[RMDB]
RNA sequence: GGGAACGACUCGAGUAGAGUCGAAAAGACGCGCUCACUGUAGUGCGCGUGCCGCAAGACCCACAGGCACCGUGCAUGAAACUGGAGCGCUAGAUGGAAAAGUCCGUGCAGGUUCGCCUGCACGGACCUCACUACAUUUGUUCGCAAAUGUAGUGAGAAAAGAAACAACAACAACAAC
Reactivity to DMS in 0.01 (KOAc 150mM, MgCl2 10mM, bicine 150mM(pH8.5), 24C), signal-to-noise 4, nucleotides 027 to 126: g020a120c140g000c010g000c010u000c010a100c070u010g010u010a170g020u000g000c010g020c020g030u000g000c000c000g010c220a100a110g010a170c050c020c050a090c140a200g000g010c000a010c100c110g030u000g000c010a040u000g000a070a100a130c110u000g000g000a020g010c010g010c000u000a010g010a120u020g000g000a090a090a100a150g010u000c000c000g020u000g000c000a000g000g000u000u010c190g000c000c000u000g000c020a010c000g000g000a010c030
Reactivity to 2A3 in 0.01 (KOAc 150mM, MgCl2 10mM, bicine 150mM(pH8.5), 24C), signal-to-noise 4, nucleotides 027 to 126: g080a010c060g000c010g000c000u010c000a300c070u080g060u110a070g020u040g000c020g010c000g000u010g000c000c010g060c040a020a070g110a170c030c040c020a070c090a090g000g010c000a010c060c100g010u010g000c010a010u060g100a140a120a070c030u080g040g010a000g010c000g010c000u010a020g060a140u170g090g030a080a120a050a050g000u020c000c010g000u000g000c010a020g000g050u030u130c160g080c040c000u010g000c010a000c010g000g000a000c000
Conditions: 150 mM KOAc, 10 mM MgCl2 and 150 mM bicine (pH 8.5), 24 C. Chemical mapping of a 177-nucleotide RNA with DMS and 2A3. Values cover nucleotides 27 to 126. For 2A3 the reverse transcriptase was SuperScript II with manganese. The 2A3 profile rests on 5,462 reads.